[RMDB]
RNA sequence: GGGAACGACUCGAGUAGAGUCGAAAACGAUCACUUCGGUGAUCGAAAACCUUUGUGCCUGGCAGGUAAGGGAGACGAGGGAGUCCCAUUGGGACUCCACUCGUCGAAGAACUUAUAUUGGCCAGGCACUCUGGUAAAACGAGUCGUUCGCGACUCGCUUAUUAAAGGUCUUCGGACCUUUAAUAAGAAAAGAAACAACAACAACAAC
Reactivity to DMS in 0.01 (KOAc 150mM, MgCl2 10mM, bicine 150mM(pH8.5), 24C), signal-to-noise 1, nucleotides 027 to 156: c030g020a010u000c010a000c010u000u020c300g050g040u000g010a030u000c000g000a050a050a080a120c000c000u000u000u000g020u000g020c030c010u020g020g010c020a090g030g010u000a000a000g000g010g030a300g010a040c000g000a040g010g010g000a100g020u010c010c010c010a300u010u030g030g070g030a020c000u000c000c000a030c000u000c030g010u000c010g010a060a090g010a220a170c030u000u000a040u000a120u000u000g060g020c020c000a040g000g010c030a000c000u000c010u010g010g020u000a040a070a080a160c020g020a030g000u000c000g020u000u030c140g010c040g010a050c010u010c030g010
Reactivity to 2A3 in 0.01 (KOAc 150mM, MgCl2 10mM, bicine 150mM(pH8.5), 24C), signal-to-noise 2, nucleotides 027 to 156: c020g010a000u000c010a000c020u050u070c220g110g000u010g000a000u000c000g000a020a000a010a000c010c000u010u000u030g010u010g020c000c000u000g030g020c010a020g100g000u020a000a000g020g060g010a050g010a000c010g000a000g000g010g000a000g020u000c000c020c030a070u160u300g000g000g000a000c010u050c000c020a130c000u000c010g000u000c000g000a010a000g000a000a000c010u020u020a020u080a150u140u270g200g020c000c000a000g010g000c000a000c000u010c000u000g000g000u060a070a070a000a070c000g000a000g000u000c010g000u030u040c080g020c010g140a010c020u030c020g010